[RMDB]
Conditions: 150 mM KOAc, 10 mM MgCl2 and 150 mM bicine (pH 8.5), 24 C.
Structure probing data (DMS and 2A3) for a 177-nucleotide construct.
For 2A3 the reverse transcriptase was SuperScript II with manganese.
RNA sequence: GGGAACGACUCGAGUAGAGUCGAAAACACUUGGAGUUCGCUCCAAGUGAAACCAUUGCCGAUUGGCAAUAAUACCGCAGGCGGAAAAGCGGAACAAAUAAGAAAGCGAAGACUUCGGUCUUCGCAACAAAAAGUUAGACUUCGGUCUAACUUUUUGAAAAGAAACAACAACAACAAC
Reactivity to DMS in 0.01 (KOAc 150mM, MgCl2 10mM, bicine 150mM(pH8.5), 24C), signal-to-noise 3, nucleotides 027 to 126: c010a000c000u010u000g000g010a050g020u000u010c250g010c000u000c010c000a000a000g020u010g000a030a100a150c010c020a040u000u000g000c000c000g000a220u000u000g010g010c010a010a020u000a090a170u010a150c030c010g010c020a070g020g010c110g000g010a100a060a130a070g020c030g000g000a130a150c200a080a060a110u000a060a130g000a070a160a090g020c000g000a010a000g000a010c000u000u000c160g030g000u000c000u010u000c000g020c010a030a040
Reactivity to 2A3 in 0.01 (KOAc 150mM, MgCl2 10mM, bicine 150mM(pH8.5), 24C), signal-to-noise 3, nucleotides 027 to 126: c000a000c010u000u010g010g000a010g000u040u100c110g130c090u020c000c000a020a000g000u000g000a010a000a000c010c010a020u000u010g000c010c030g300a300u150u300g000g000c000a000a010u070a020a020u060a060c010c000g020c010a030g140g030c000g160g040a060a170a030a010g030c000g000g040a010a030c030a050a130a080u260a080a060g110a150a080a010g010c010g000a010a000g000a000c000u040u120c220g030g000u000c010u000u010c000g010c000a000a000